[RMDB]
Background
An RNA of 207 nucleotides, treated with DMS and 2A3 and read out base by base. The reactions ran in a buffer of 150 mM KOAc, 10 mM MgCl2 and 150 mM bicine (pH 8.5), at 24 C.
RNA sequence: GGGAACGACUCGAGUAGAGUCGAAAAUCCGCCAUCCAUGACGGAGGUCCUACACCCUCAACAAUUUCAACUGGAAAUUUGUAGCCAGUCACAUUUUGGAACGUAUUCACAAACUGAAUGUUGGUCGUCUGCCACCCGGUACCGAUGUUCAAGAGUGGUAUUUGAUGUCUUUCGAGACAUCAAAUACAAAAGAAACAACAACAACAAC
Reactivity to DMS in 0.01 (KOAc 150mM, MgCl2 10mM, bicine 150mM(pH8.5), 24C), signal-to-noise 2, nucleotides 027 to 156: u000c030c020g060c010c020a100u000c120c130a180u020g030a050c030g010g010a070g020g020u010c040c010u010a150c060a120c050c020c030u000c020a090a130c070a020a060u000u010u020c040a060a070c040u000g000g010a080a110a190u000u000u010g020u010a180g000c030c040a010g020u000c030a140c120a130u000u000u000u000g010g000a110a030c060g010u000a120u010u010c040a040c040a090a070a120c150u000g000a070a120u000g000u000u010g000g000u000c080g000u030c060u020g040c000c000a070c000c040c000g000g000u020a100c060c050g000a040u000g020u000u000c060a020a090g030a120g040u000g020
Reactivity to 2A3 in 0.01 (KOAc 150mM, MgCl2 10mM, bicine 150mM(pH8.5), 24C), signal-to-noise 5, nucleotides 027 to 156: u010c020c000g010c010c010a120u090c070c040a130u160g020a050c040g030g010a020g010g020u040c000c000u080a080c070a110c050c030c020u110c050a060a100c060a110a120u110u150u140c040a060a050c040u050g040g110a070a090a180u180u100u160g110u090a060g030c010c010a010g010u050c010a050c020a060u110u160u060u070g080g020a080a060c060g050u090a160u120u160c010a020c020a060a090a010c030u000g010a010a010u030g000u000u030g000g000u030c060g040u010c080u090g090c010c000a090c020c010c000g020g000u020a020c010c000g020a010u010g010u030u010c000a020a020g010a010g040u010g000
Description: DMS adducts were read by reverse transcription with MarathonRT. High 2A3 reactivity points to a flexible backbone, as in loops and unpaired stretches.